[RMDB]
An RNA of 177 nucleotides, treated with DMS and read out base by base. The RNA was probed in 150 mM KOAc, 10 mM MgCl2 and 150 mM bicine (pH 8.5) at 24 C.
RNA sequence: GGGAACGACUCGAGUAGAGUCGAAAAUGCUAAAUCGUAAGAUGAUGUAUAGGGGGUGACGCCUGCCCGGUGCUGGAAGGUUAAGAGGAGGGUUUAGCGUAAGCGAAGAUCUGAAUUGAAGCCCCAGUCGGUGAGGAUUUUUCGAAAUCCUCACCGAAAAAGAAACAACAACAACAAC
Reactivity to DMS in 0.01 (KOAc 150mM, MgCl2 10mM, bicine 150mM(pH8.5), 24C), signal-to-noise 1, nucleotides 027 to 126: u000g040c000u000a090a230a050u000c000g010u030a150a070g000a030u000g000a180u000g000u030a050u000a190g020g000g010g010g020u020g000a100c180g000c000c040u000g030c040c020c030g040g020u010g000c010u000g050g000a130a090g000g030u010u010a030a300g000a090g000g010a300g000g000g000u010u000u000a260g030c000g000u000a100a120g000c000g010a110a090g000a020u000c020u000g010a300a150u000u010g010a210a090g000c020c010c030c010a050g010